Source: RMDB library M2RFPK, as collected in RNAgym. An RNA of 207 nucleotides, treated with 2A3 and read out base by base. Reactivities are given for positions 27 through 156. The RNA was probed in 150 mM KOAc, 10 mM MgCl2 and 150 mM bicine (pH 8.5) at 24 C.
RNA sequence: GGGAACGACUCGAGUAGAGUCGAAAAGAAGAAGAGGCUAGGGGGUAUUCCGGUGUGGGAUACUUAGUAAUAUGCAACGCUAAUUGCAUAAGAUUGUAGGACGGAAAUUACAGUCUUGGUUUUUCAAUGAAGCUUGGGGUCUUCGGACCCCAAGCAACGUAGACUAAAUCUUCGGAUUUAGUCUACGAAAAGAAACAACAACAACAAC
Reactivity to 2A3 in 0.01 (KOAc 150mM, MgCl2 10mM, bicine 150mM(pH8.5), 24C), signal-to-noise 1, nucleotides 027 to 156: g040a040a000g010a000a020g020a000g020g020c070u080a040g070g030g000g020g020u050a030u060u000c050c010g070g030u110g020u070g030g010g010a020u030a080c000u030u080a030g020u080a090a100u030a030u110g000c000a050a000c030g000c140u130a120a050u030u030g000c010a030u020a040a040g010a030u020u050g020u030a030g020g090a040c080g010g010a000a040a010u080u020a030c030a030g020u000c000u070u040g020g000u090u010u000u070u090c050a070a100u140g070a120a010g000c000u000u000g000g040g000g000u000c000u060u010c070g120g040a010c000c030c000c000a000a000g000c000a010a000